[RMDB]
RNA sequence: GGGAACGACUCGAGUAGAGUCGAAAAGAUAUGGAUUCAGGGAGCCAUUGGGUCGGAAACGACCUUAUGGCAUCGAUCUGACUGUCCUAAGUCGCACACGAUUACGCGAUUCGUCGCGUAAUCGUAACCAUGAUAGGUCCUUCGGGACCUAUCAUGGAAAAGAAACAACAACAACAAC
Reactivity to 2A3 in 0.01 (KOAc 150mM, MgCl2 10mM, bicine 150mM(pH8.5), 24C), signal-to-noise 1, nucleotides 027 to 126: g020a010u080a040u170g010g000a010u070u020c020a030g010g000g080a000g040c030c000a010u000u080g030g000g000u010c020g060g050a030a080a080c000g000a000c000c000u000u000a000u010g000g000c030a010u070c020g020a060u030c010u050g040a060c120u190g050u060c020c010u010a160a040g060u050c010g030c080a080c040a000c100g000a010u000u030a010c000g000c000g020a010u070u090c190g100u030c020g150c000g000u000a000a000u010c010g000u000a010a010
Reactivity to DMS in 0.01 (KOAc 150mM, MgCl2 10mM, bicine 150mM(pH8.5), 24C), signal-to-noise 2, nucleotides 027 to 126: g010a010u000a300u000g010g000a040u000u000c000a000g000g000g010a040g010c000c000a000u000u010g020g000g000u000c020g010g000a070a060a200c010g020a000c000c000u000u000a000u000g000g010c010a120u000c090g000a090u020c000u000g000a020c300u000g000u000c000c000u000a040a120g000u000c010g010c290a130c230a030c000g000a000u000u000a000c020g000c000g010a000u000u040c230g000u010c000g030c010g030u000a000a000u000c030g000u000a000a150